Chemical mapping of a 207-nucleotide RNA with 2A3. The RNA was probed in 150 mM KOAc, 10 mM MgCl2 and 150 mM bicine (pH 8.5) at 24 C. It was measured as part of the RMDB library OK3TST. 2A3 adducts were read by reverse transcription with SuperScript II with manganese. 2A3 is a SHAPE reagent: it acylates the 2'-hydroxyl of flexible nucleotides of all four kinds.

RNA sequence: GGGAACGACUCGAGUAGAGUCGAAAAGAGGUGUAUUAAUUUGCUAGGACAUAAAAAACACUAUAGAUAGCAUAAACGACAAACAUUUAUUUUCUCACAGCUCUGGAGUCUGGAAGCCCAAGAUCAAGAUAUUGGCAGGUUUGCUUUCUCCUGAGGACCGAAAAUAGGUGUUCGCACCUAUUUUCGGAAAAGAAACAACAACAACAAC
Reactivity to 2A3 in 0.01 (KOAc 150mM, MgCl2 10mM, bicine 150mM(pH8.5), 24C), signal-to-noise 1, nucleotides 027 to 156: g070a020g000g020u010g050u090a150u190u170a190a070u110u010u010g000c010u030a010g000g080a000c070a050u260a050a070a000a030a030a000c080a010c020u160a080u090a160g060a060u080a050g020c000a010u090a100a090a010c070g140a000c110a020a170a010c010a050u080u130u100a070u030u010u130u020c000u000c000a130c010a050g080c010u030c050u030g000g000a000g010u000c000u010g040g030a000a000g000c010c010c000a020a020g010a070u090c020a020a040g090a110u140a100u210u040g020g000c000a000g000g000u000u000u030g100c000u000u000u000c000u000c040c000u010g020a050g000g010a030